[RMDB]
RNA sequence: GGGAACGACUCGAGUAGAGUCGAAAAUUGUCCGGGUUCGCCCGGACAAAGCGGGAGGCGACCGGAGGGCUCCUCCCAGGCGAUCCCACGCCUCGCUCCGGAGCGUGAUGACCUUCGGGUCAUCAAAAUGUUAGUGUAAUUUCGAUUACACUAACAUAAAAGAAACAACAACAACAAC
Reactivity to 2A3 in 0.01 (KOAc 150mM, MgCl2 10mM, bicine 150mM(pH8.5), 24C), signal-to-noise 4, nucleotides 027 to 126: u060u020g000u010c000c000g010g000g010u030u050c210g050c000c000c000g000g000a000c000a000a000a000g010c020g000g010g000a010g010g020c080g110a240c010c020g020g010a010g030g080g090c080u020c000c000u000c000c000c000a010g010g000c000g010a030u030c000c000c000a010c000g000c000c000u020c040g020c010u000c010c000g010g010a040g090c100g080u080g010a010u000g000a000c000c010u030u050c270g090g000g000u000c000a000u000c000a010a010a000
Reactivity to DMS in 0.01 (KOAc 150mM, MgCl2 10mM, bicine 150mM(pH8.5), 24C), signal-to-noise 9, nucleotides 027 to 126: u000u000g010u000c000c000g010g000g020u000u010c230g010c000c000c010g010g010a000c000a010a020a090g010c170g000g000g000a030g010g010c080g020a150c030c010g010g000a030g020g010g010c100u000c010c000u000c010c000c010a010g000g010c000g000a080u000c000c000c000a300c010g000c010c000u000c070g010c010u000c000c010g000g000a260g010c220g010u000g010a010u000g000a010c000c000u000u010c200g020g010g010u000c000a000u000c010a030a040a080